[RMDB]
RNA sequence: GGGAACGACUCGAGUAGAGUCGAAAAGAUAUGGAAAGUAAACGCAAGAAGGAAUCGCGAUAAGCGUGUAUCGGAAACGAUAUAAACGCUUUUGACGCGACCUUCUUGCGUUUACUUUCCUAAGUCACCAUCGAUUAGAGUUCGCUCUAAUCGAUGGAAAAGAAACAACAACAACAAC
Reactivity to DMS in 0.01 (KOAc 150mM, MgCl2 10mM, bicine 150mM(pH8.5), 24C), signal-to-noise 1, nucleotides 027 to 126: g000a040u000a300u000g000g000a020a030a000g000u010a000a020a000c020g000c000a010a020g010a020a000g000g000a150a090u000c010g040c000g020a160u020a040a030g000c010g070u020g000u000a010u010c000g000g010a180a110a130c000g010a000u000a010u000a070a070a110c020g020c000u020u010u010u000g010a220c040g050c000g020a020c000c000u000u000c000u010u000g000c010g000u000u000u000a000c000u000u000u000c000c000u000a030a100g000u000c030a240